[RMDB]
RNA sequence: GGGAACGACUCGAGUAGAGUCGAAAAUGAUCUUCUUCUUUGUCUUCCGGAGAUCCCUCUCGAGUUCCUCCGCUUUCUUUCUUCCACUCACCCACUUCUCGAGAAUAUCUUCUCUUCCAUCGCGCUUCUUCUUCAACUCGGACCGGCUCAUCUCGACCUUCAAAAUGGUGUUCGCACCAUUUUGAAGAAAAGAAACAACAACAACAAC
Reactivity to 2A3 in 0.01 (KOAc 150mM, MgCl2 10mM, bicine 150mM(pH8.5), 24C), signal-to-noise 1, nucleotides 027 to 156: u130g010a040u010c020u090u000c010u140u040c010u160u180u120g050u080c040u110u050c060c040g000g020a010g020a040u010c000c030c000u000c000u010c040g060a050g050u020u040c010c000u040c020c050g000c000u000u080u000c000u030u030u010c000u110u030c040c000a090c050u070c020a050c000c040c000a090c010u110u070c020u040c030g060a060g010a110a100u040a070u020c020u130u030c040u000c000u120u040c070c010a110u090c040g000c000g040c100u030u030c000u020u000c000u030u060c070a050a030c030u010c040g040g010a040c040c010g000g010c020u020c000a050u000c040u000c010g060a050c010